[RMDB]
RNA sequence: GGGAACGACUCGAGUAGAGUCGAAAAAUCUGCCUUAAUGAGCGGAUCUCCUACCGAAACCUUUUGCCCCACUUUACAUAGGAUGCGAAAUCCUUCGCCAUUAAGUUCGACGGUAUCUACCCCCACGAUUAUGUAAUGCAUUCGUGCAUUACAUAAUAAAAGAAACAACAACAACAAC
Reactivity to DMS in 0.01 (KOAc 150mM, MgCl2 10mM, bicine 150mM(pH8.5), 24C), signal-to-noise 9, nucleotides 027 to 126: a050u000c020u000g000c020c020u000u000a100a090u010g000a140g030c020g010g000a040u000c050u000c010c010u000a090c090c060g000a080a090a070c080c020u000u000u000u000g000c050c010c010c040a090c120u000u000u000a090c140a080u000a050g000g010a050u000g010c150g010a070a110a060u000c030c040u000u000c090g020c050c030a050u000u010a060a080g010u000u000c050g010a110c050g000g010u000a050u000c060u010a300c050c010c000c020c030a100c210g000
Reactivity to 2A3 in 0.01 (KOAc 150mM, MgCl2 10mM, bicine 150mM(pH8.5), 24C), signal-to-noise 5, nucleotides 027 to 126: a000u020c010u030g010c010c000u180u160a230a100u150g060a030g050c020g010g010a020u010c020u000c030c000u040a090c040c040g130a150a120a090c040c030u070u090u170u240g050c010c030c030c000a050c040u070u090u040a040c030a010u100a030g020g040a030u040g030c040g080a110a040a060u050c000c000u010u030c040g000c020c000a040u070u060a080a010g030u030u050c020g040a030c020g070g000u020a060u040c010u040a110c010c000c000c010c010a020c020g000